[RMDB]
RNA sequence: GGGAACGACUCGAGUAGAGUCGAAAACUCGGAUUGUUCGCAAUCCGAGAAAAAACCGUAGGAGAAUGCAUAAGCUUGGACCUACCCAUUCGAAAGAGUGGUGUAGCUAGCUUCCAUUCUCCUAAACGGAAAAAAGCUACGGUUUCGACCGUAGCAACGGAACUCUGUGAUUCGUCACAGAGUUCCGAAAAGAAACAACAACAACAAC
Reactivity to 2A3 in 0.01 (KOAc 150mM, MgCl2 10mM, bicine 150mM(pH8.5), 24C), signal-to-noise 1, nucleotides 027 to 156: c000u010c000g020g000a000u000u000g030u070u120c190g010c140a000a010u000c000c000g000a000g010a050a010a000a000a000a000c000c000g010u000a000g000g000a020g010a010a010u020g030c000a070u060a300a000g000c000u090u130g010g150a130c010c010u000a000c030c000c000a000u020u000c040g050a120a090a110g020a020g010u000g000g100u220g040u110a010g000c000u000a000g000c010u000u000c030c000a020u020u000c000u040c010c000u000a000a000a000c010g010g170a060a060a000a040a170a000g000c010u050a000c010g000g130u080u120u170c190g080a040c010c000g000u000a010g000c000a000a040
The record gives the reactivity of an RNA of 207 nucleotides to 2A3. The 2A3 profile rests on 720 reads. Source: RMDB library RNAMAK, as collected in RNAgym.